[RMDB]
RNA sequence: GGGAACGACUCGAGUAGAGUCGAAAAGCCCAGGCGGAGCUCGACCGCCGGUUCAAGCCAUGACGGGGUUCAUCGACGAACACCGCGCCAGGUACGGAGUCGAGCCGAUCUGCAGGGUGCUGCCGAUUGACUCUAAGUCAUUCGUGACUUAGAGUCAAAAAGAAACAACAACAACAAC
Reactivity to DMS in 0.01 (KOAc 150mM, MgCl2 10mM, bicine 150mM(pH8.5), 24C), signal-to-noise 3, nucleotides 027 to 126: g010c000c000c010a090g000g010c000g020g010a100g000c000u000c000g000a030c020c090g040c010c020g000g000u010u020c270a130a180g010c000c020a060u000g040a300c010g010g000g000g000u000u000c020a180u020c250g000a160c280g000a040a000c010a080c000c000g010c020g040c090c020a080g000g000u010a040c060g000g000a260g030u000c000g000a010g000c000c220g000a100u050c030u030g000c000a130g000g010g020u030g000c070u010g010c050c030g010a210u020
Reactivity to 2A3 in 0.01 (KOAc 150mM, MgCl2 10mM, bicine 150mM(pH8.5), 24C), signal-to-noise 4, nucleotides 027 to 126: g020c000c000c000a010g050g000c000g000g020a050g030c000u000c000g010a010c030c090g060c030c000g020g010u020u130c080a080a020g000c000c020a110u070g030a070c010g010g000g020g000u020u000c040a180u190c150g250a170c110g000a040a000c100a080c050c020g090c040g040c020c030a020g000g010u020a060c010g000g000a000g010u010c000g000a000g020c010c000g050a110u000c000u010g000c010a020g020g000g020u100g040c020u060g020c020c010g090a100u000

Chemical mapping of a 177-nucleotide RNA with DMS and 2A3. Conditions: 150 mM KOAc, 10 mM MgCl2 and 150 mM bicine (pH 8.5), 24 C. It was measured as part of the RMDB libraries RFM100 and RFMREP. For 2A3 the reverse transcriptase was SuperScript II with manganese. Values cover nucleotides 27 to 126. DMS adducts were read by reverse transcription with MarathonRT.